Record summary
Structure probing data (DMS and 2A3) for a 177-nucleotide construct. The RNA was probed in 150 mM KOAc, 10 mM MgCl2 and 150 mM bicine (pH 8.5) at 24 C.
RNA sequence: GGGAACGACUCGAGUAGAGUCGAAAAUGCAUAAAUCUAACUCCUACCAUCAGCUACACACUGCUUGACAUAUAUUGUUAGAAGCACCUCGCAUUUGUGGGUUCUCUUAAGCAAAAUACUUGCAUUAGUUAUAAAAACUGUUCGCAGUUUUUAUAACAAAAGAAACAACAACAACAAC
Reactivity to DMS in 0.01 (KOAc 150mM, MgCl2 10mM, bicine 150mM(pH8.5), 24C), signal-to-noise 2, nucleotides 027 to 126: u010g010c050a060u000a060a110a130u000c050u000a060a070c060u000c030c040u000a090c090c030a080u000c050a020g000c030u000a090c100a120c110a060c120u000g010c020u000u000g020a060c060a050u000a080u010a080u000u000g000u000u010a060g010a050a050g010c050a070c110c070u000c060g020c060a080u010u010u000g020u000g010g010g000u000u000c020u000c020u010u000a080a100g010c030a010a050a080a120u000a070c090u010u010g010c010a080u000u000a120
Reactivity to 2A3 in 0.01 (KOAc 150mM, MgCl2 10mM, bicine 150mM(pH8.5), 24C), signal-to-noise 2, nucleotides 027 to 126: u020g000c020a060u050a140a160a080u080c040u060a020a040c020u050c010c000u010a070c010c020a020u030c030a000g010c030u050a030c020a000c010a020c100u060g000c010u060u090g020a010c060a010u180a010u060a040u180u130g040u040u040a050g010a160a000g010c030a020c020c000u030c020g030c050a110u040u030u140g100u060g050g050g040u050u010c020u000c000u070u090a040a010g000c000a000a000a040a140u180a220c070u050u040g000c010a020u050u090a040
As a SHAPE reagent, 2A3 marks flexible, mostly unpaired nucleotides at the ribose 2'-OH.